[RMDB]
RNA sequence: GGGAACGACUCGAGUAGAGUCGAAAAGCGCGAAGACUUGACGCGUUGCUGUAUCGAAUAAUAAAGAUACUGCUUCGGACAGAAAGUAAUCUUCUGUAUGAAGAUGUCUUGUCGAAAGCGCGAAGAAGGGAAUUGUUUACUUCGGUAAACAAUUCCCAAAAGAAACAACAACAACAAC
Reactivity to DMS in 0.01 (KOAc 150mM, MgCl2 10mM, bicine 150mM(pH8.5), 24C), signal-to-noise 2, nucleotides 027 to 126: g040c100g000c000g010a110a300g000a000c000u000u000g000a000c090g010c170g030u000u000g040c030u000g000u060a010u000c000g000a100a130u120a100a170u150a140a140a170g040a000u000a000c000u010g000c000u000u000c000g030g000a020c010a130g030a030a090a050g040u000a060a050u030c100u000u000c000u000g000u010a020u030g040a110a010g000a080u040g000u020c000u020u010g000u060c010g000a080a090a260g000c000g020c000g020a030a040g000a040a030
Reactivity to 2A3 in 0.01 (KOAc 150mM, MgCl2 10mM, bicine 150mM(pH8.5), 24C), signal-to-noise 3, nucleotides 027 to 126: g020c030g030c000g050a070a010g000a000c000u030u040g010a000c000g000c000g030u000u020g040c010u010g000u000a000u000c010g050a080a100u300a300a040u180a100a040a000g000a000u020a010c000u010g000c000u010u010c020g060g000a040c030a070g220a090a120a000g110u210a140a150u000c020u000u000c000u000g140u140a070u300g040a050a000g000a030u060g000u000c010u030u000g000u000c010g100a260a060a050g000c000g040c000g010a030a000g070a020a050
An RNA of 177 nucleotides, treated with DMS and 2A3 and read out base by base. For 2A3, 1,124 sequencing reads were counted. The RNA was probed in 150 mM KOAc, 10 mM MgCl2 and 150 mM bicine (pH 8.5) at 24 C. For 2A3 the reverse transcriptase was SuperScript II with manganese. For DMS the reverse transcriptase was MarathonRT.